[RMDB]
RNA sequence: GGGAACGACUCGAGUAGAGUCGAAAACAUGGCUAAGGAACUCGGCAAAAUGGCCUCGUAACUUCGGGAGAAGAGGCGCCCCACUCCGGUGGGGCCGCAGUGAAAAGGCCCAGGCGACUGUUUAUCAUUAAGCGUGAAUUUUCGAAUUCACGCUUAAAAAAGAAACAACAACAACAAC
Reactivity to DMS in 0.01 (KOAc 150mM, MgCl2 10mM, bicine 150mM(pH8.5), 24C), signal-to-noise 2, nucleotides 027 to 126: c100a050u010g010g010c020u010a080a180g000g000a140a070c040u000c030g040g040c050a090a070a120a080u060g000g010c010c010u000c030g010u000a120a150c030u000u020c070g030g000g010a100g000a120a220g020a070g000g020c020g040c080c000c000c000a010c000u000c210c160g000g040u020g000g020g000g030c010c010g030c080a030g050u000g000a060a120a080a120g020g000c000c000c120a090g000g000c130g000a070c090u000g000u040u000u000a090u030c090a150
Reactivity to 2A3 in 0.01 (KOAc 150mM, MgCl2 10mM, bicine 150mM(pH8.5), 24C), signal-to-noise 2, nucleotides 027 to 126: c070a090u110g050g000c020u160a040a050g150g000a090a060c030u010c020g000g010c040a100a000a000a200u130g070g010c000c020u000c020g080u020a060a020c010u070u110c080g100g000g000a060g010a110a030g060a040g050g010c050g000c010c030c000c000a000c000u000c020c150g020g000u010g000g000g040g000c010c000g000c000a010g000u000g070a020a030a000a010g030g000c000c020c000a010g000g020c000g010a050c040u090g020u050u020u010a070u070c040a060
Conditions: 150 mM KOAc, 10 mM MgCl2 and 150 mM bicine (pH 8.5), 24 C. Structure probing data (DMS and 2A3) for a 177-nucleotide construct. The DMS profile rests on 2,710 reads. The data come from the RNA Mapping Database (RMDB), library RFM100. DMS (dimethyl sulfate) methylates the pairing face of unpaired adenines and cytosines.